[RMDB]
RNA sequence: GGGAACGACUCGAGUAGAGUCGAAAAGCAUAGCGUCAAGUUGGUUCACCAGAAGUCUGGUUAGCAAACAGAGUAAAACCAAAAGGUUAGACGCACUCUGUGAAAAAGUACGAAAGUACAAAGAUAAUGCGUAUAUGAUCUUCGGAUCAUAUACGCAAAAAGAAACAACAACAACAAC
Reactivity to DMS in 0.01 (KOAc 150mM, MgCl2 10mM, bicine 150mM(pH8.5), 24C), signal-to-noise 1, nucleotides 027 to 126: g000c090a110u020a100g010c020g020u010c000a140a100g030u000u000g000g020u010u000c050a030c020c040a000g010a280a190g000u020c010u010g000g000u000u020a010g000c050a060a100a000c000a020g000a040g020u000a190a070a020a060c070c000a020a110a180a200g000g040u000u000a050g030a040c050g000c140a050c030u010c000u000g010u000g000a000a030a020a100a060g010u000a000c000g020a070a090a130g000u000a010c000a060a050a050g000a070u000a040a200
Chemical mapping of a 177-nucleotide RNA with DMS. Values cover nucleotides 27 to 126. For DMS, 590 sequencing reads were counted. The RNA was probed in 150 mM KOAc, 10 mM MgCl2 and 150 mM bicine (pH 8.5) at 24 C.